[RMDB]
RNA sequence: GGGAACGACUCGAGUAGAGUCGAAAAUUAUCGUAUCCAUUAGAUGCUGCGUACAUUAGAAUCGAAUCAUAUUGUGGAUUUUUAUUGUAGGUUAAUAACAAUAAUAUCAUAUCAUAAUUACCUAUUGCAAACACACACCAUUCGUGGUGUGUGUUUGAAAAGAAACAACAACAACAAC
Reactivity to 2A3 in 0.01 (KOAc 150mM, MgCl2 10mM, bicine 150mM(pH8.5), 24C), signal-to-noise 1, nucleotides 027 to 126: u040u020a000u110c030g030u050a000u010c000c000a010u030u160a030g070a030u010g010c080u030g000c000g020u080a050c000a040u120u200a120g240a300a100u130c040g000a030a030u030c030a000u150a030u070u080g090u080g000g000a000u000u150u000u030u070a110u010u010g000u000a040g020g040u020u190a030a030u180a280a120c000a000a000u070a090a030u030a070u090c030a030u040a070u210c000a000u050a230a020u110u090a080c000c000u030a120u100u250g000
Reactivity to DMS in 0.01 (KOAc 150mM, MgCl2 10mM, bicine 150mM(pH8.5), 24C), signal-to-noise 1, nucleotides 027 to 126: u000u000a030u010c100g030u000a060u010c050c000a060u000u020a090g000a100u000g010c070u000g040c040g020u000a100c080a090u010u000a050g010a140a080u010c040g010a090a100u000c070a100u010a110u000u020g020u000g000g030a050u000u000u000u000u000a010u000u000g010u000a060g010g030u020u010a070a090u020a060a030c000a020a040u000a000a020u000a100u000c020a080u000a100u000c020a040u000a050a050u010u010a150c000c010u000a080u000u000g010